Structure probing data (2A3 and DMS) for a 207-nucleotide construct. Values cover nucleotides 27 to 156.

RNA sequence: GGGAACGACUCGAGUAGAGUCGAAAAGGGUGAGACCUACGAACCGUAGGGGUAUUCUCAAAGGAAGCUUUUGCAGUGACGCCCAUGUAAGUGGGAUAUAACAACAGAACUCGUAUGAGUAGCCUAAUAAAUCGGACCUUCUUCGGAAGGUCCGAAACAUAUUUAUUUACUUCGGUAAAUAAAUAUGAAAAGAAACAACAACAACAAC
Reactivity to 2A3 in 0.01 (KOAc 150mM, MgCl2 10mM, bicine 150mM(pH8.5), 24C), signal-to-noise 3, nucleotides 027 to 156: g050g000g010u060g030a070g040a070c000c000u020a030c020g110a180a110c080c090g020u050a010g010g020g000g000u040a090u140u030c030u020c030a030a040a010g110g020a090a060g000c010u020u040u100u050g010c070a050g000u010g030a030c040g020c010c000c000a010u050g060u130a130a150g020u020g010g000g040a010u040a010u040a090a050c050a040a020c020a030g030a050a030c000u000c030g040u120a040u140g020a010g030u040a020g010c000c030u100a130a050u110a140a130a040u040c000g000g000a000c000c010u000u030c010u030u050c100g090g010a000a000g000g000u000c000c000g000a000a000a000
Reactivity to DMS in 0.01 (KOAc 150mM, MgCl2 10mM, bicine 150mM(pH8.5), 24C), signal-to-noise 2, nucleotides 027 to 156: g040g040g030u000g000a100g020a060c020c010u000a050c000g000a120a110c040c070g000u000a060g000g000g010g030u000a080u000u000c050u000c000a070a060a200g030g030a110a060g020c040u000u000u000u010g010c000a070g000u000g000a240c180g010c000c030c000a010u000g010u010a070a210g030u000g000g000g000a060u000a050u010a160a090c030a100a080c030a100g000a070a020c030u000c020g020u000a140u010g020a070g000u000a140g000c030c040u020a030a100u000a050a100a140u010c000g000g000a010c000c000u000u000c010u000u010c300g070g010a010a020g040g020u000c010c000g000a000a000a060

For 2A3, 1,917 sequencing reads were counted.